[RMDB]
The record gives the reactivity of an RNA of 177 nucleotides to 2A3 and DMS. DMS adducts were read by reverse transcription with MarathonRT.

RNA sequence: GGGAACGACUCGAGUAGAGUCGAAAACGGGGCAACUCUUCUCAGAAUCCAGCGAGAGGCGUGGAGAGAGGGCCGCGGUGCUCUGGAGUAGAGGCUCUGCCUUCGAAACACCAUCGAUCGUCCCUUCGAUAAGCAAUUUGUUCGCAAAUUGCUUAUCAAAAGAAACAACAACAACAAC
Reactivity to 2A3 in 0.01 (KOAc 150mM, MgCl2 10mM, bicine 150mM(pH8.5), 24C), signal-to-noise 2, nucleotides 027 to 126: c030g000g000g040g010c010a030a090c030u020c010u120u000c030u010c020a030g240a070a070u060c050c030a040g080c080g070a190g010a050g210g070c080g050u050g040g030a050g010a010g010a020g050g020g000c020c020g020c010g010g010u030g000c000u000c000u020g010g010a000g000u020a010g000a020g020g000c020u020c160u300g030c010c000u150u130c000g010a010a010a010c010a020c000c100a010u000c000g030a150u040c010g010u030c000c000c030u050u070c010
Reactivity to DMS in 0.01 (KOAc 150mM, MgCl2 10mM, bicine 150mM(pH8.5), 24C), signal-to-noise 4, nucleotides 027 to 126: c110g020g000g000g030c070a100a090c020u000c020u000u010c020u000c020a110g010a190a130u010c060c040a080g020c110g000a110g000a100g000g010c090g000u010g010g020a070g000a110g000a040g010g010g000c070c020g030c050g010g000u000g000c020u000c010u000g000g000a060g010u000a040g000a020g000g010c000u010c200u000g000c020c010u000u010c020g000a110a100a130c010a010c150c010a030u000c000g000a110u010c030g000u000c000c000c000u000u010c120

2A3 adducts were read by reverse transcription with SuperScript II with manganese. For DMS, 4,014 sequencing reads were counted. The RNA was probed in 150 mM KOAc, 10 mM MgCl2 and 150 mM bicine (pH 8.5) at 24 C.